RNA sequence: GGGAACGACUCGAGUAGAGUCGAAAAAGAGGAAGAAGUAGAGCAUCAAGCAAAGCGAGAGGACCAAGCUAAUCUCGAACGUAUUAUCGCCUUUACAGCUUUAGUGAUGAUGAUGUUUGAUAGUGAGAUGCAGAUGUACCUUCGGGUACAUCUGCAUAAAAGAAACAACAACAACAAC
Reactivity to 2A3 in 0.01 (KOAc 150mM, MgCl2 10mM, bicine 150mM(pH8.5), 24C), signal-to-noise 2, nucleotides 027 to 126: a000g050a000g110g000a120a000g010a040a020g130u170a010g020a000g020c040a020u040c060a120a000g020c000a050a040a010g050c090g020a070g000a030g070g000a010c020c080a030a000g000c010u020a050a020u040c110u060c130g070a080a030c070g010u050a000u020u030a000u100c020g000c010c010u020u060u030a080c090a010g010c020u050u020u110a050g000u040g020a040u000g000a000u050g000a000u090g040u110u000u040g150a130u080a050g180u120g090a200g000
Reactivity to DMS in 0.01 (KOAc 150mM, MgCl2 10mM, bicine 150mM(pH8.5), 24C), signal-to-noise 2, nucleotides 027 to 126: a040g000a050g000g010a050a030g000a060a050g040u010a030g030a120g000c000a020u000c040a050a130g050c060a040a070a110g000c070g000a070g010a060g000g000a120c100c100a100a050g000c050u050a140a050u010c080u000c040g010a020a050c080g000u060a050u010u000a030u000c070g040c050c020u000u000u020a130c260a140g010c030u010u000u030a090g030u000g000a080u010g020a080u000g000a090u000g010u020u000u000g000a080u000a060g020u010g000a050g000

The record gives the reactivity of an RNA of 177 nucleotides to 2A3 and DMS. For DMS, 2,474 sequencing reads were counted.